[RMDB]
RNA sequence: GGGAACGACUCGAGUAGAGUCGAAAACUGCAGAUCUGGAAAUUGCAACGAAGGAAGAAACCUCGUUGCUGGAAGCCUGGAAGAAGUAUCGGGUGUUGCUGAACCGUGUUGAUACAUCAACUGCACCACAUACCUAGCAGUUCGCUGCUAGGUAUGUAAAAGAAACAACAACAACAAC
Reactivity to 2A3 in 0.01 (KOAc 150mM, MgCl2 10mM, bicine 150mM(pH8.5), 24C), signal-to-noise 4, nucleotides 027 to 126: c040u060g000c020a000g020a140u060c020u080g040g070a060a120a120u230u100g010c000a000a010c010g070a140a130g060g030a110a200g120a290a210a130c000c000u010c000g000u000u000g000c000u010g010g000a020a020g040c020c000u050g020g020a060a060g030a080a010g060u040a020u060c030g020g060g010u070g040u120u210g080c100u080g030a070a030c050c030g040u060g070u160u120g040a070u030a070c030a040u030c000a010a050c020u030g000c010a020c030c020
Reactivity to DMS in 0.01 (KOAc 150mM, MgCl2 10mM, bicine 150mM(pH8.5), 24C), signal-to-noise 4, nucleotides 027 to 126: c160u000g020c030a050g010a170u010c010u000g010g000a050a110a120u000u000g010c010a000a000c010g000a050a080g010g010a160a190g020a120a130a110c010c010u000c010g010u000u000g000c000u000g010g010a100a090g010c110c010u000g000g020a070a110g010a050a060g010u010a020u000c050g000g000g020u000g010u010u000g010c130u000g000a070a050c070c050g010u010g030u000u000g010a060u010a040c060a080u000c040a080a110c010u000g010c030a090c090c110